Source: RMDB library RNAMAK, as collected in RNAgym. Chemical mapping of a 207-nucleotide RNA with DMS and 2A3. The 2A3 profile rests on 11,975 reads. The DMS profile rests on 10,042 reads.

RNA sequence: GGGAACGACUCGAGUAGAGUCGAAAACACUGUCUUCGGACAGUGAAAAAACCUUUGUGUAGGCCAUGAUAGGGAGCCUACAGGACCCAUUGGGUCUGGGUAGGCGAAGAACUAUCACGCGCCUACACUCUGGUAAAAACCGACGUUCGCGUCGGAAUGUAUAUUUACGAUUCGUCGUAAAUAUACAAAAAGAAACAACAACAACAAC
Reactivity to DMS in 0.01 (KOAc 150mM, MgCl2 10mM, bicine 150mM(pH8.5), 24C), signal-to-noise 3, nucleotides 027 to 156: c010a000c000u010g000u000c000u000u010c300g000g000a020c000a030g010u000g000a000a050a080a120a130a020c010c010u000u000u020g020u000g020u000a000g010g020c020c030a030u010g010a060u000a020g020g010g020a300g040c000c000u040a020c020a290g000g000a010c000c000c000a300u020u000g050g010g000u000c010u000g000g040g040u000a010g000g000c000g000a060a130g000a150a170c030u000a030u000c000a040c000g020c140g000c000c010u000a000c000a000c000u000c030u030g010g010u000a020a050a050a100a130c000c000g010a030c030g020u000u010c300g050c070g050u000c000g010g000a020a010
Reactivity to 2A3 in 0.01 (KOAc 150mM, MgCl2 10mM, bicine 150mM(pH8.5), 24C), signal-to-noise 7, nucleotides 027 to 156: c000a000c000u000g000u010c010u060u080c230g110g000a000c000a000g000u000g000a050a000a000a000a000a000c000c010u010u010u010g000u000g000u000a000g010g000c000c010a040u070g000a000u010a000g020g000g010a020g000c000c000u010a010c000a000g000g000a000c010c010c100a210u280u300g020g000g010u030c010u030g180g130g020u010a000g000g000c020g050a100a020g020a010a010c000u000a000u000c000a000c030g100c040g000c000c000u000a000c000a000c000u000c000u000g010g000u070a100a040a020a040a020c000c000g000a000c000g030u060u110c300g010c010g130u000c000g000g000a010a010